[RMDB]
RNA sequence: GGGAACGACUCGAGUAGAGUCGAAAAAAAGAAUCCUGGAUUAUGCUCUUUGUCAAAGCACAUGGAGUAAAAUUGAAGCCGGAGAACCAGUCACUCCUGUAGAUCUCAGCUACCUUGGACCAAAGAAUCUAUGUAGAUUGUUCGCAAUCUACAUAGAAAAAGAAACAACAACAACAAC
Reactivity to 2A3 in 0.01 (KOAc 150mM, MgCl2 10mM, bicine 150mM(pH8.5), 24C), signal-to-noise 3, nucleotides 027 to 126: a000a000a000g080a030a060u000c010c000u020g010g000a050u050u060a020u160g000c010u000c000u040u040u000g030u010c090a300a230a070g040c050a130c010a010u010g010g000a010g010u020a050a120a060a080u060u050g110a070a020g010c060c020g070g020a040g010a050a010c020c010a010g060u070c020a010c040u030c000c010u000g070u060a030g020a130u000c030u010c050a000g000c000u030a050c000c000u020u050g030g010a010c030c010a100a070a000g120a090a070
Reactivity to DMS in 0.01 (KOAc 150mM, MgCl2 10mM, bicine 150mM(pH8.5), 24C), signal-to-noise 3, nucleotides 027 to 126: a060a040a110g010a160a130u000c010c010u000g020g000a090u000u000a080u000g000c020u000c000u000u000u000g010u000c030a110a090a180g010c170a040c030a020u000g010g020a020g010u000a020a040a070a080u000u000g020a150a130g010c060c050g000g020a040g000a070a090c050c030a060g010u000c080a070c060u000c040c020u000g010u000a070g010a050u000c040u000c040a060g000c020u000a040c050c060u000u010g010g000a130c070c030a030a070a110g000a100a110